[RMDB]
RNA sequence: GGGAACGACUCGAGUAGAGUCGAAAAGGGGUCUCGGUAGAGCGUAUGUGGAGCUUGGAUUUAUGGGACUGAAGCCUCCACGGUCCCAUUGUCAGCUCCAUUUACGCUCAAACGAGACGGAGGCACCCAAACUGUGAACGGUUCGCCGUUCACAGAACUAAGCUUACCACUUCGGUGGUAAGCUUAGAAAAGAAACAACAACAACAAC
Reactivity to 2A3 in 0.01 (KOAc 150mM, MgCl2 10mM, bicine 150mM(pH8.5), 24C), signal-to-noise 1, nucleotides 027 to 156: g090g030g000g000u000c000u000c000g000g040u140a050g000a000g000c000g000u030a050u020g010u010g000g000a050g010c090u080u180g180g010a090u160u260u280a020u050g000g000g000a000c000u030g030a050a050g060c000c020u050c060c000a070c030g000g000u020c000c000c020a000u000u030g020u030c020a000g000c000u000c000c000a000u000u000u040a000c000g000c000u000c000a000a000a000c000g000a000g000a000c030g010g000a010g030g000c090a080c000c010c000a080a140a040c000u010g000u000g020a000a000c000g020g110u060u050c300g070c170c000g000u000u000c000a000c010a000g000a030a030